The data come from the RNA Mapping Database (RMDB), library OK2TRN.
Structure probing data (2A3 and DMS) for a 177-nucleotide construct.
The 2A3 profile rests on 1,228 reads.
The DMS profile rests on 1,972 reads.
Values cover nucleotides 27 to 126.
For DMS the reverse transcriptase was MarathonRT.
RNA sequence: GGGAACGACUCGAGUAGAGUCGAAAACUGGGCAUGGUGGCAUACACCUGUAAUCCCAGCUAUUAGGAAGGCUGAAGCAGGAACAUCACUUGAACCUGGGAGGUGUAGGCUGCUGGUAGCCAAGAUCGAAAGGUGUAGCUUUCGAGCUACACCUUUCAAAAGAAACAACAACAACAAC
Reactivity to 2A3 in 0.01 (KOAc 150mM, MgCl2 10mM, bicine 150mM(pH8.5), 24C), signal-to-noise 1, nucleotides 027 to 126: c000u050g010g020g000c030a060u220g010g000u000g000g000c030a040u060a080c010a000c020c010u020g010u050a030a090u070c000c050c000a000g000c000u070a100u260u120a070g150g100a170a000g030g070c030u070g040a070a000g100c050a010g020g010a020a040c010a050u090c040a020c130u040u080g010a010a000c000c010u050g000g000g030a010g000g000u010g010u000a030g040g030c010u010g000c010u030g060g170u050a030g000c010c000a030a010g040a080u120c080
Reactivity to DMS in 0.01 (KOAc 150mM, MgCl2 10mM, bicine 150mM(pH8.5), 24C), signal-to-noise 3, nucleotides 027 to 126: c040u010g010g010g020c080a140u010g000g020u020g010g030c120a080u000a090c010a020c010c000u000g030u030a090a170u010c100c040c000a020g020c070u000a070u000u000a120g010g010a100a150g010g000c020u010g020a170a120g010c030a020g000g020a070a130c040a070u000c070a090c100u000u000g020a070a140c140c050u010g000g020g010a030g000g010u000g000u000a030g000g010c010u000g020c010u000g010g030u030a050g010c000c000a100a080g000a090u000c160